[RMDB]
RNA sequence: GGGAACGACUCGAGUAGAGUCGAAAAGUCCAGUGUCAUGUUGCGAUGAGUGUACAUCAACCAUACCAUAUGGAAGAUGACACGAUCAUCCACAAUACUCUUAGAAACAUGGGUACUCGGAGAGAGACGACUUUCAAGGGUUCGCCCUUGAAAGUCGAAAAGAAACAACAACAACAAC
Reactivity to DMS in 0.01 (KOAc 150mM, MgCl2 10mM, bicine 150mM(pH8.5), 24C), signal-to-noise 3, nucleotides 027 to 126: g000u000c000c020a070g030u000g010u000c050a040u000g020u000u000g000c240g010a000u000g000a120g000u000g030u000a140c000a010u000c000a010a300c020c000a010u010a060c300c300a130u020a000u000g000g000a020a300g000a000u000g000a050c020a000c010g000a070u000c010a020u000c010c020a190c170a070a110u020a070c070u000c070u000u010a140g010a190a030a060c010a020u000g010g010g030u000a050c010u000c120g020g000a060g000a080g010a150g010a230
Reactivity to 2A3 in 0.01 (KOAc 150mM, MgCl2 10mM, bicine 150mM(pH8.5), 24C), signal-to-noise 1, nucleotides 027 to 126: g110u000c000c020a000g020u030g110u070c030a020u020g040u030u070g080c070g020a010u000g000a000g040u050g030u020a250c010a000u000c000a010a010c010c000a020u060a090c080c070a090u060a000u300g030g000a000a000g020a000u020g010a020c000a010c020g030a050u020c040a010u000c000c030a020c090a060a060u160a210c050u010c050u090u050a050g150a090a090a010c010a030u010g040g010g080u090a020c010u060c130g070g010a080g000a010g010a000g000a060